The data come from the RNA Mapping Database (RMDB), library TTRINS.
The record gives the reactivity of an RNA of 177 nucleotides to DMS.
[RMDB]
RNA sequence: GGGAACGACUCGAGUAGAGUCGAAAAGAUAUGGAGUAUCAUACGGCUCAACAGCCAACGGUAGCUAUGAUUCGGAAACGAAUCAUAGCUACCGUUGGACAUGAGCGGUAUGAGUACUCCUAAGUCACGGUAUGAGAUACUUCGGUAUCUCAUACCGAAAAGAAACAACAACAACAAC
Reactivity to DMS in 0.01 (KOAc 150mM, MgCl2 10mM, bicine 150mM(pH8.5), 24C), signal-to-noise 1, nucleotides 027 to 126: g000a050u020a300u000g000g000a000g020u000a030u000c000a000u000a000c010g000g040c000u000c010a020a120c300a270g020c010c000a010a000c000g000g020u000a000g030c020u000a010u000g000a010u000u000c010g020g000a100a080a240c000g000a000a000u000c000a000u000a010g010c000u000a000c000c000g000u000u000g020g000a020c100a100u000g020a000g030c000g000g050u000a000u000g000a030g040u000a010c000u000c020c000u010a000a070g010u040c040a300
The DMS profile rests on 1,501 reads.
The RNA was probed in 150 mM KOAc, 10 mM MgCl2 and 150 mM bicine (pH 8.5) at 24 C.